[RMDB]
RNA sequence: GGGAACGACUCGAGUAGAGUCGAAAAGAGGGCCAGACACUGCGCUAUCCCGCAGGGCGACCGAUACACGGGUGUUCGUGAUCGUAUAUCCCCCCAAGGAGCGUCUGCGGGGUUGAUCCCGGGCAGUCCUACGGUAUCAGUUCGCUGAUACCGUAGGAAAAGAAACAACAACAACAAC
Reactivity to 2A3 in 0.01 (KOAc 150mM, MgCl2 10mM, bicine 150mM(pH8.5), 24C), signal-to-noise 2, nucleotides 027 to 126: g080a070g050g040g020c030c030a020g030a020c050a020c090u030g010c030g010c050u020a030u040c000c000c000g000c010a020g000g030g080c000g040a050c010c010g010a020u200a230c060a010c010g030g010g110u160g080u190u150c010g010u030g020a060u030c040g000u020a060u010a080u160c000c030c000c010c000c020a040a070g060g020a100g050c010g060u010c000u010g010c010g000g040g000g000u000u060g010a030u020c000c000c020g000g020g000c030a000g040u000
Reactivity to DMS in 0.01 (KOAc 150mM, MgCl2 10mM, bicine 150mM(pH8.5), 24C), signal-to-noise 1, nucleotides 027 to 126: g070a040g010g000g000c000c000a070g020a070c000a090c070u000g000c140g000c000u000a000u000c000c000c020g000c000a090g010g010g020c000g010a240c140c000g030a160u010a120c060a020c090g000g010g030u030g000u030u000c010g000u000g000a120u000c070g000u040a080u040a190u000c000c030c000c000c060c080a140a180g010g000a180g000c090g070u030c000u020g030c040g000g000g000g000u030u010g000a170u000c000c000c060g050g010g040c030a150g000u000
Chemical mapping of a 177-nucleotide RNA with 2A3 and DMS. For 2A3 the reverse transcriptase was SuperScript II with manganese. Values cover nucleotides 27 to 126. The 2A3 profile rests on 2,212 reads. Reactivities are rounded to 0.1 and cut off at 0 and 3.